[RMDB]
Conditions: 150 mM KOAc, 10 mM MgCl2 and 150 mM bicine (pH 8.5), 24 C.
The record gives the reactivity of an RNA of 177 nucleotides to DMS and 2A3.
DMS adducts were read by reverse transcription with MarathonRT.
It was measured as part of the RMDB library OK1LIB.
RNA sequence: GGGAACGACUCGAGUAGAGUCGAAAAAUCGCGUAUCACUUGACACGACUGCAACCCUCGUGUGAUUUCUGCCGCAUGUUGCUCGCAUCAUUCAGAACAUCGUUUACCAAUGUUUUACGAUAUUUGCCAUGGCUGCAUAGUUCGCUAUGCAGCCAUGAAAAGAAACAACAACAACAAC
Reactivity to DMS in 0.01 (KOAc 150mM, MgCl2 10mM, bicine 150mM(pH8.5), 24C), signal-to-noise 2, nucleotides 027 to 126: a070u010c070g070c000g000u000a050u000c040a040c050u030u010g000a060c040a050c000g020a090c040u010g000c070a110a020c100c020c000u010c010g060u040g010u040g000a120u020u030u010c010u010g000c040c050g000c040a120u000g020u040u020g000c020u010c040g000c010a110u020c040a110u000u000c090a010g010a040a060c020a070u000c000g000u000u000u000a130c060c040a130a050u020g000u000u000u010u050a050c160g020a070u050a060u000u020u000g000c090
Reactivity to 2A3 in 0.01 (KOAc 150mM, MgCl2 10mM, bicine 150mM(pH8.5), 24C), signal-to-noise 3, nucleotides 027 to 126: a020u030c020g000c030g060u060a010u120c010a020c100u070u100g070a010c010a000c030g130a110c050u090g040c020a060a060c010c010c030u050c010g020u030g020u000g080a130u000u030u050c030u040g000c000c000g000c000a010u060g000u080u090g050c030u010c030g060c010a060u040c020a070u210u000c020a020g040a090a140c040a070u080c030g020u020u040u060a070c050c000a050a100u110g000u050u070u030u040a080c080g040a040u080a130u100u070u070g100c020
The 2A3 profile rests on 1,484 reads.